Conditions: 150 mM KOAc, 10 mM MgCl2 and 150 mM bicine (pH 8.5), 24 C. An RNA of 177 nucleotides, treated with DMS and 2A3 and read out base by base. 2A3 adducts were read by reverse transcription with SuperScript II with manganese. DMS adducts were read by reverse transcription with MarathonRT. The 2A3 profile rests on 1,492 reads. For DMS, 5,464 sequencing reads were counted. The data come from the RNA Mapping Database (RMDB), library OK2TRN.
RNA sequence: GGGAACGACUCGAGUAGAGUCGAAAAGUUUAAGAUGUAAAAUUUUCAGUUUGGCGCAUGCGACAGACUUGCGAAGAGCUGAGUAUGUUCCUUUGAGAUACUCGACAACCUCUUCCAUGGACGCAGGUAUAUAAGUGACGUUCGCGUCACUUAUAUAAAAAGAAACAACAACAACAAC
Reactivity to DMS in 0.01 (KOAc 150mM, MgCl2 10mM, bicine 150mM(pH8.5), 24C), signal-to-noise 6, nucleotides 027 to 126: g010u000u010u000a080a140g000a090u010g000u000a050a060a080a110u010u010u000u010c060a100g000u000u000u000g010g010c060g010c060a050u000g020c020g010a100c090a100g000a100c040u000u000g010c110g000a020a040g000a040g010c110u010g000a030g030u000a010u000g000u010u000c040c300u000u010u010g010a050g000a030u000a000c010u000c020g010a100c220a080a100c300c010u000c010u000u010c000c030a040u010g010g010a100c060g010c050a020g000g010
Reactivity to 2A3 in 0.01 (KOAc 150mM, MgCl2 10mM, bicine 150mM(pH8.5), 24C), signal-to-noise 2, nucleotides 027 to 126: g010u080u170u210a060a010g020a090u110g050u150a090a100a180a280u110u220u060u120c030a010g070u030u080u190g050g020c090g000c080a030u070g000c000g030a030c070a040g070a080c010u050u070g050c090g020a010a020g010a030g000c110u090g010a010g010u020a030u000g170u060u030c040c000u130u090u250g060a080g000a020u040a000c010u000c020g040a040c090a070a130c000c000u000c000u020u000c000c000a040u030g000g050a020c040g020c050a000g020g090